This 177-nucleotide RNA was probed chemically with DMS and 2A3. 2A3 adducts were read by reverse transcription with SuperScript II with manganese. 2A3 is a SHAPE reagent: it acylates the 2'-hydroxyl of flexible nucleotides of all four kinds. For DMS the reverse transcriptase was MarathonRT. For 2A3, 1,478 sequencing reads were counted.
RNA sequence: GGGAACGACUCGAGUAGAGUCGAAAAACGAUCGCUCAGUACGCUGACUACGCGAUCGCGUACCAGUACGUACGCGUACCAGCUACGUACGUCUAGGUCGAUCCGUAGCGCUGAGCUAGCAUGGUACGCGCACUGGACUUUUCGAAGUCCAGUGCGCAAAAGAAACAACAACAACAAC
Reactivity to DMS in 0.01 (KOAc 150mM, MgCl2 10mM, bicine 150mM(pH8.5), 24C), signal-to-noise 2, nucleotides 027 to 126: a140c090g000a060u000c240g000c000u000c010a000g000u010a140c300g030c070u000g000a260c110u000a020c070g020c180g000a030u020c040g040c300g000u000a060c090c000a220g000u000a020c000g000u000a040c100g020c080g010u000a090c150c040a100g000c070u000a020c020g040u000a000c000g000u000c180u000a170g020g010u010c030g000a010u000c000c000g010u000a010g000c080g010c010u030g000a000g060c010u000a010g020c150a090u000g000g000u000a070c030
Reactivity to 2A3 in 0.01 (KOAc 150mM, MgCl2 10mM, bicine 150mM(pH8.5), 24C), signal-to-noise 1, nucleotides 027 to 126: a010c060g030a090u050c040g010c010u000c000a000g040u080a090c140g040c190u120g060a220c030u030a020c020g040c090g000a000u020c000g020c010g050u040a050c020c010a030g000u040a000c010g000u000a010c110g010c020g010u010a160c060c060a010g000c010u000a020c000g000u010a000c000g030u040c070u100a110g000g000u060c010g010a020u020c030c000g000u030a000g000c010g000c030u030g000a000g000c030u000a030g010c010a030u070g050g000u090a010c090